[RMDB]
RNA sequence: GGGAACGACUCGAGUAGAGUCGAAAAGCAGUCCGACUAGGGUCACUGCGAACACGACAGGGCUGGAAUGUCACCUGGAGUGGAUUAGGACGGACUACUCCGUCUAGGGACAGUAGGACGUCCGAAAGGCAAGCAGCAGCUUCGGCUGUUGCUUGCCAAAAGAAACAACAACAACAAC
Reactivity to 2A3 in 0.01 (KOAc 150mM, MgCl2 10mM, bicine 150mM(pH8.5), 24C), signal-to-noise 2, nucleotides 027 to 126: g010c000a030g010u070c010c030g100a300c230u210a140g040g000g000u020c030a000c000u000g000c010g010a040a010c010a000c000g050a000c000a030g010g000g030c030u060g030g180a140a080u160g090u160c060a050c100c000u010g000g010a040g010u000g000g000a030u050u110a040g020g000a030c010g000g020a000c000u000a010c000u000c020c060g130u090c100u060a050g030g060g000a070c070a050g000u020a030g000g020a000c020g000u040c000c000g030a000a000a010
Reactivity to DMS in 0.01 (KOAc 150mM, MgCl2 10mM, bicine 150mM(pH8.5), 24C), signal-to-noise 2, nucleotides 027 to 126: g000c020a000g000u010c090c040g000a060c110u020a020g000g020g000u010c030a100c010u000g000c000g000a130a120c000a010c000g010a180c020a000g000g000g050c050u030g030g040a040a120u020g000u020c050a140c030c020u000g000g000a140g010u010g000g000a080u050u030a080g000g020a030c000g000g000a040c000u000a000c020u010c050c170g000u000c120u020a010g040g000g010a020c090a020g000u010a010g010g020a030c000g000u010c000c010g030a000a060a060
This 177-nucleotide RNA was probed chemically with 2A3 and DMS. For DMS, 4,093 sequencing reads were counted. The RNA was probed in 150 mM KOAc, 10 mM MgCl2 and 150 mM bicine (pH 8.5) at 24 C. For 2A3 the reverse transcriptase was SuperScript II with manganese. DMS adducts were read by reverse transcription with MarathonRT. The 2A3 profile rests on 2,939 reads. Values cover nucleotides 27 to 126.